[RMDB]
This 207-nucleotide RNA was probed chemically with 2A3.

RNA sequence: GGGAACGACUCGAGUAGAGUCGAAAAGCAUGAGAUCUUCAACAAAUCUUUAUACUAAACAAUGAAUGCCCAAACAUACCAUUAAUCGGCCUACUCCUAGCUGCAGCAGGAAAAUCAGCUCAAUUCGGACUACAUCCCUGAUUGCCCUCAGCAAUAGCCUCUUCUGACGGUUCGCCGUCAGAAGAGGAAAAGAAACAACAACAACAAC
Reactivity to 2A3 in 0.01 (KOAc 150mM, MgCl2 10mM, bicine 150mM(pH8.5), 24C), signal-to-noise 1, nucleotides 027 to 156: g030c010a040u090g000a000g000a030u050c010u170u050c160a040a040c040a100a160a000u020c030u020u040u280a300u000a150c060u230a260a040a000c020a070a040u120g000a140a010u040g060c000c090c000a090a100a000c020a020u140a030c000c040a030u000u220a160a110u080c010g000g000c030c000u070a060c010u000c010c030u040a020g000c020u010g000c070a010g010c010a000g000g070a080a030a000a000u030c030a010g000c000u010c030a000a170u140u100c010g000g000a000c000u000a030c030a070u120c010c030c000u050g030a100u000u080g030c010c000c000u000c020a010g000c000a000a020u070a060g050
It was measured as part of the RMDB library PDB130. The reactions ran in a buffer of 150 mM KOAc, 10 mM MgCl2 and 150 mM bicine (pH 8.5), at 24 C. For 2A3 the reverse transcriptase was SuperScript II with manganese. Values cover nucleotides 27 to 156. The 2A3 profile rests on 458 reads.